[RMDB]
RNA sequence: GGGAACGACUCGAGUAGAGUCGAAAAGGAAACAAGUCAAGUAACUGCUCCAAUCAGUUUAAUAUCAGUGACGUCCUCUAUCCGAGGACAAUAUUUUAAAUGGAUAAAAGGAGCAGGAGAAAAAAAACUAGAUGUUUAGGUUCGCCUAAACAUCUAGAAAAGAAACAACAACAACAAC
Reactivity to 2A3 in 0.01 (KOAc 150mM, MgCl2 10mM, bicine 150mM(pH8.5), 24C), signal-to-noise 1, nucleotides 027 to 126: g060g020a150a050a000c080a130a070g080u160c030a000a160g040u030a080a140c000u000g000c000u000c000c020a040a040u030c000a030g010u000u010u040a050a010u040a020u080c040a050g130u030g160a030c080g020u040c010c020u030c000u060a140u040c110c040g000a000g010g010a000c000a000a000u020a000u010u030u000u000a000a000a000u060g010g010a010u050a170a230a070a070g000g000a010g000c000a000g030g010a030g100a020a090a010a010a010a010a000a000
Reactivity to DMS in 0.01 (KOAc 150mM, MgCl2 10mM, bicine 150mM(pH8.5), 24C), signal-to-noise 2, nucleotides 027 to 126: g000g010a100a090a110c110a110a120g050u010c100a070a120g010u020a090a110c010u020g000c000u000c000c000a080a080u000c000a090g020u000u000u000a010a010u000a000u020c260a090g000u010g020a160c180g010u000c000c000u020c000u000a110u020c290c110g000a020g010g000a020c000a010a000u000a000u000u000u000u000a000a020a010u000g000g010a000u000a080a090a100a240g070g020a010g010c010a000g000g000a160g000a090a000a000a100a060a020a050a230